Structure probing data (2A3 and DMS) for a 177-nucleotide construct.

RNA sequence: GGGAACGACUCGAGUAGAGUCGAAAAUAGGUUCGAUUCCUAGUAUCUCAACCGAAAAGGGGAUAUAGUUCAACUGGUAGAGCACUGUAUUUUUCAUACAGCGAAAGGCACAAGACUUCGAACAUUAUUAACAGCACGCAUUCGUGCGUGCUGUUAAAAAAGAAACAACAACAACAAC
Reactivity to 2A3 in 0.01 (KOAc 150mM, MgCl2 10mM, bicine 150mM(pH8.5), 24C), signal-to-noise 1, nucleotides 027 to 126: u080a040g230g000u040u040c050g000a080u000u180c000c000u000a000g000u000a000u090c000u000c000a130a250c120c060g000a030a000a000a000g060g000g000g040a020u090a010u020a090g070u000u000c030a000a030c090u090g000g000u020a020g000a010g140c040a070c040u000g040u020a020u000u260u000u160u130c040a000u000a030c020a000g000c070g170a000a070a000g110g000c000a010c030a050a000g070a160c080u000u000c010g020a020a000c000a000u090u080a030
Reactivity to DMS in 0.01 (KOAc 150mM, MgCl2 10mM, bicine 150mM(pH8.5), 24C), signal-to-noise 1, nucleotides 027 to 126: u000a000g060g000u000u010c080g050a280u070u000c040c000u050a110g000u000a050u000c020u000c050a080a060c150c070g040a090a070a090a020g000g060g030g000a180u000a060u000a120g000u000u000c070a120a210c110u000g010g010u000a050g000a140g020c030a210c000u000g020u000a000u000u040u000u020u000c130a140u000a010c070a020g000c040g000a130a100a180g010g060c000a080c070a090a170g050a070c080u000u000c040g000a010a000c060a030u000u000a160

Source information:
The DMS profile rests on 1,004 reads. 2A3 is a SHAPE reagent: it acylates the 2'-hydroxyl of flexible nucleotides of all four kinds. Values cover nucleotides 27 to 126.